[RMDB]
RNA sequence: GGGAACGACUCGAGUAGAGUCGAAAAGAUAUGGAUCGGUAGUUGCUAUUGCAUCGAUCUCGGAAACGAGGGAGCAAUAGACCCAACAAACGAUCCUAAGUCGAACCUGAAUCUUCGGAUUCAGGAACAACAAUGGAUUGUUCGCAAUCCAUUGUUGAAAAGAAACAACAACAACAAC
Reactivity to DMS in 0.01 (KOAc 150mM, MgCl2 10mM, bicine 150mM(pH8.5), 24C), signal-to-noise 7, nucleotides 027 to 126: g010a030u000a300u000g000g000a010u000c010g010g000u000a300g010u000u000g000c000u010a010u000u000g010c000a300u010c180g000a020u010c000u000c000g010g010a090a090a200c020g010a000g000g000g000a020g020c000a010a010u000a010g000a170c250c290c050a010a010c020a030a100a260c000g000a010u000c000c000u000a040a120g010u000c010g000a100a190c010c000u010g010a030a000u000c000u000u000c190g010g000a020u000u000c000a000g000g000a030a110
Reactivity to 2A3 in 0.01 (KOAc 150mM, MgCl2 10mM, bicine 150mM(pH8.5), 24C), signal-to-noise 6, nucleotides 027 to 126: g020a010u060a020u160g010g000a010u000c010g000g060u110a010g000u050u010g000c000u020a010u000u010g010c030a200u300c120g080a130u010c010u000c000g030g010a070a080a040c010g000a010g010g020g010a030g000c000a010a000u000a020g070a100c120c050c000a010a010c000a010a300a010c000g000a000u000c000c000u010a110a010g050u020c020g030a060a060c000c000u000g000a000a010u000c010u030u120c300g190g000a000u000u000c000a000g000g030a010a040

Chemical mapping of a 177-nucleotide RNA with DMS and 2A3. It was measured as part of the RMDB library TTRDEL.